[RMDB]
RNA sequence: GGGAACGACUCGAGUAGAGUCGAAAAAAUAUUGCGGGUCAACCUUUGAAGACAUUACUUGAACAACGUCCUGAGGGCAAAGCGCAAAUUGAACAAAUUUUUGUUCAAACACGUGAUGCAGCAUAUGACGAUACCUGGCGUUCGCGCCAGGUAUCGUAAAAGAAACAACAACAACAAC
Reactivity to 2A3 in 0.01 (KOAc 150mM, MgCl2 10mM, bicine 150mM(pH8.5), 24C), signal-to-noise 1, nucleotides 027 to 126: a000a020u290a030u050u080g150c040g070g040g000u110c020a140a220c000c040u040u030u170g240a180a030g000a000c030a070u000u090a020c020u000u120g040a000a000c040a040a050c060g040u000c000c010u040g070a040g000g000g030c010a100a140a000g040c040g000c000a040a170a300u050u010g000a000a030c000a020a110a040u070u120u000u000u040g000u000u000c000a000a060a000c150a000c080g000u000g080a000u060g010c000a070g000c000a000u000a040u210g100